[RMDB]
RNA sequence: GGGAACGACUCGAGUAGAGUCGAAAAAGCGCUCGUCACCCGCUACAUGCACGUGGUCGUUGCAAGCUACAACGAAUUCGGCGGGCUCAGCAAUACGAUCGUCGACAAGGAGUUUUUGAAGCGGCUGCCUCCACUAAUGGUUCGCCAUUAGUGGAGGAAAAGAAACAACAACAACAAC
Reactivity to DMS in 0.01 (KOAc 150mM, MgCl2 10mM, bicine 150mM(pH8.5), 24C), signal-to-noise 2, nucleotides 027 to 126: a090g000c050g020c040u010c020g010u000c110a190c070c000c050g000c020u000a060c090a100u000g000c060a060c020g040u000g010g020u010c020g030u000u010g000c000a140a060g010c050u000a040c030a080a150c030g020a180a120u000u000c030g020g000c300g030g000g000c040u010c100a080g010c010a080a110u000a100c080g000a060u000c020g020u000c000g000a300c100a070a120g000g000a120g000u030u000u000u050u020g000a150a100g040c050g000g000c060u000g010
Reactivity to 2A3 in 0.01 (KOAc 150mM, MgCl2 10mM, bicine 150mM(pH8.5), 24C), signal-to-noise 2, nucleotides 027 to 126: a000g050c040g020c010u050c000g090u050c070a140c060c020c040g030c020u060a050c000a080u050g060c010a020c050g050u040g000g000u010c030g000u060u040g000c040a060a020g050c030u160a270c010a050a000c020g060a080a270u200u180c040g020g000c000g050g060g000c040u070c000a050g000c010a030a030u070a210c050g060a050u030c010g030u040c020g000a000c000a010a000g120g000a040g030u010u030u060u190u120g140a090a000g040c010g040g000c020u070g030